[RMDB]
RNA sequence: GGGAACGACUCGAGUAGAGUCGAAAAGAUAUGGAUGUGGAACUACGCUCGAUUCUUCGUUGAAAUCGGAAACGAUGGAGAAGGGAGCGCCACAUCCUAAGUCGAUAGUCAAUGUUCGCAUUGACAAGCUACCCUCAAGCUUCGGCUUGAGGGUAGCAAAAGAAACAACAACAACAAC
Reactivity to 2A3 in 0.01 (KOAc 150mM, MgCl2 10mM, bicine 150mM(pH8.5), 24C), signal-to-noise 1, nucleotides 027 to 126: g030a050u070a010u130g000g000a000u020g040u010g060g020a060a040c240u250a050c300g010c000u010c030g160a210u130u040c000u050u030c050g080u110u140g170a300a300a080u200c070g080g080a070a060a010c000g000a000u040g060g050a020g000a030a000g000g190g010a050g020c000g080c010c000a000c010a000u070c010c010u000a010a000g070u030c010g130a130u200a070g000u000c020a000a000u000g070u160u090c300g000c070a000u010u000g000a000c060a070a000
Chemical mapping of a 177-nucleotide RNA with 2A3. 2A3 adducts were read by reverse transcription with SuperScript II with manganese. For 2A3, 1,020 sequencing reads were counted. The reactions ran in a buffer of 150 mM KOAc, 10 mM MgCl2 and 150 mM bicine (pH 8.5), at 24 C. It was measured as part of the RMDB library TTRDEL.